[RMDB]
An RNA of 177 nucleotides, treated with DMS and read out base by base. It was measured as part of the RMDB library OK2TST. Values are in units of 0.01, from 0 to 300, in steps of 10.
RNA sequence: GGGAACGACUCGAGUAGAGUCGAAAAUUGAGUUAUUUGAUGGUGUGAAGGGUUCAAUCACAGUGCAUCAUCACUUAAGUUGCAAGAAAUGUUUACGAGAAAUAGAAGAACCCAUAUUAGAUUCUAAAUGCUAUUAAAUAUUCGUAUUUAAUAGCAUAAAAGAAACAACAACAACAAC
Reactivity to DMS in 0.01 (KOAc 150mM, MgCl2 10mM, bicine 150mM(pH8.5), 24C), signal-to-noise 2, nucleotides 027 to 126: u030u000g010a160g020u000u020a010u000u000u010g000a000u000g010g020u010g020u010g000a160a200g010g000g010u000u000c200a150a110u010c090a030c080a080g010u010g010c000a000u000c020a000u010c030a010c020u010u000a010a040g020u000u010g000c070a050a070g020a120a050a080u010g010u000u020u000a110c100g010a070g010a110a060a110u010a040g010a130a160g000a100a150c020c000c010a090u010a130u010u010a180g010a100u000u000c010u010a060a150